[RMDB]
An RNA of 177 nucleotides, treated with DMS and 2A3 and read out base by base. The reactions ran in a buffer of 150 mM KOAc, 10 mM MgCl2 and 150 mM bicine (pH 8.5), at 24 C.

RNA sequence: GGGAACGACUCGAGUAGAGUCGAAAAGAUAUGGAGCGUUGGACAUGCUGGAUAAGGGUCGGAAACGACCCGUAACAGCAACAGCCACCGCUCCUAAGUCAAAGGACCAUACUUCGGUAUGGUCCAACCAGCAUAGAUUGUUCGCAAUCUAUGCUGGAAAAGAAACAACAACAACAAC
Reactivity to DMS in 0.01 (KOAc 150mM, MgCl2 10mM, bicine 150mM(pH8.5), 24C), signal-to-noise 3, nucleotides 027 to 126: g020a050u000a300u000g000g010a010g010c010g000u000u010g010g000a060c080a240u000g020c000u000g000g000a080u000a130a140g010g020g010u010c010g010g000a090a070a200c000g020a000c000c000c000g000u000a040a200c010a010g000c010a020a020c270a150g010c000c010a010c040c010g000c010u010c010c010u000a000a060g010u000c070a070a130a120g000g000a010c000c000a000u000a000c000u000u010c230g010g000u000a000u000g000g010u000c000c000a010a040
Reactivity to 2A3 in 0.01 (KOAc 150mM, MgCl2 10mM, bicine 150mM(pH8.5), 24C), signal-to-noise 2, nucleotides 027 to 126: g000a030u060a050u150g000g010a010g010c000g020u020u010g000g020a050c060a170u090g010c010u000g000g000a010u010a050a040g020g010g000u000c020g020g020a060a080a050c020g000a020c000c000c000g000u000a000a000c000a000g010c000a000a020c060a010g040c000c000a000c020c000g000c000u000c000c000u000a050a000g050u030c050a060a080a180g010g010a010c000c000a000u000a000c000u030u090c300g110g000u000a000u000g000g000u010c000c010a000a000